[RMDB]
RNA sequence: GGGAACGACUCGAGUAGAGUCGAAAAAGAGCGCCCGAAUGUGCGUGGUGUAGUUCAGCUCCGGCACCCAGCCGCCCACCACGCCGCAGGCUGCCAGCGCUCCGGCGAACUGCUGUGGGUGGCGUUCGCCUACUUCGGUGUUCGCACCGAAGUAGGCAAAAGAAACAACAACAACAAC
Reactivity to 2A3 in 0.01 (KOAc 150mM, MgCl2 10mM, bicine 150mM(pH8.5), 24C), signal-to-noise 1, nucleotides 027 to 126: a010g050a000g020c000g040c020c020c060g040a070a120u220g040u050g040c020g020u010g000g100u220g060u090a210g060u150u060c030a040g020c000u010c020c060g000g040c040a060c040c020c000a000g070c020c000g020c020c000c000a000c000c010a030c000g000c020c000g000c000a020g010g010c010u090g090c030c040a040g060c090g050c070u060c030c030g010g000c000g040a090a060c040u070g020c030u050g030u100g010g020g040u020g050g000c000g020u030u070c080
Reactivity to DMS in 0.01 (KOAc 150mM, MgCl2 10mM, bicine 150mM(pH8.5), 24C), signal-to-noise 1, nucleotides 027 to 126: a060g010a050g000c020g020c070c060c060g010a100a060u000g010u000g010c010g040u000g000g020u000g020u020a110g000u020u010c140a080g000c060u000c100c020g010g020c100a110c020c010c020a180g010c020c040g020c100c060c000a010c010c040a060c010g010c030c030g010c080a000g000g020c110u030g010c060c030a050g000c100g000c080u000c040c050g000g010c030g010a060a100c050u010g010c060u010g030u000g000g010g020u020g000g000c010g000u000u000c070